Conditions: 150 mM KOAc, 10 mM MgCl2 and 150 mM bicine (pH 8.5), 24 C. Chemical mapping of a 207-nucleotide RNA with DMS and 2A3. The 2A3 profile rests on 10,711 reads. DMS (dimethyl sulfate) methylates the pairing face of unpaired adenines and cytosines. Source: RMDB library OK3TST, as collected in RNAgym.

RNA sequence: GGGAACGACUCGAGUAGAGUCGAAAAGCUAGCUCAACAGUACUUCAAUAGAUUGAGGCAAAACAUGGCAGGUAUAGGGCACAAUCUGAAAGCGAAUGAAACCAUUGUGAGUUCGCACUUUUUCAUUUAUUCAAAGAGGAUAUAUUACGAUGGACAAAACGUAUUAAUAAUUCGUUAUUAAUACGUUAAAAGAAACAACAACAACAAC
Reactivity to DMS in 0.01 (KOAc 150mM, MgCl2 10mM, bicine 150mM(pH8.5), 24C), signal-to-noise 5, nucleotides 027 to 156: g030c040u010a100g020c030u010c020a090a090c060a140g020u000a060c040u000u010c040a090a160u000a090g020a160u010u000g010a090g010g010c020a080a090a070a100c070a100u000g020g000c020a040g040g030u000a070u000a080g030g020g010c030a070c040a050a110u000c060u000g000a090a050a120g050c010g010a060a060u000g010a120a080a080c040c030a090u000u000g020u010g020a270g000u000u000c040g010c050a140c010u000u000u000u000u000c040a070u000u000u010a120u030u000c030a040a050a090g010a080g010g010a090u000a060u000a090u000u000a050c010g010a040u000g010g020a140c120a060a070
Reactivity to 2A3 in 0.01 (KOAc 150mM, MgCl2 10mM, bicine 150mM(pH8.5), 24C), signal-to-noise 9, nucleotides 027 to 156: g040c030u040a010g020c010u030c070a040a070c020a080g070u080a070c050u080u140c070a090a130u060a160g080a140u040u090g020a030g050g000c030a030a050a040a050c050a070u080g040g000c010a000g030g000u080a050u100a120g030g010g000c030a010c020a040a060u040c050u070g040a080a040a020g010c020g020a020a010u050g020a080a030a040c020c010a040u040u080g010u010g020a030g010u010u020c010g040c010a050c010u040u070u020u050u040c020a040u040u070u270a120u060u120c040a040a050a030g040a020g030g030a010u060a020u010a020u210u070a050c050g020a020u040g020g030a020c070a020a180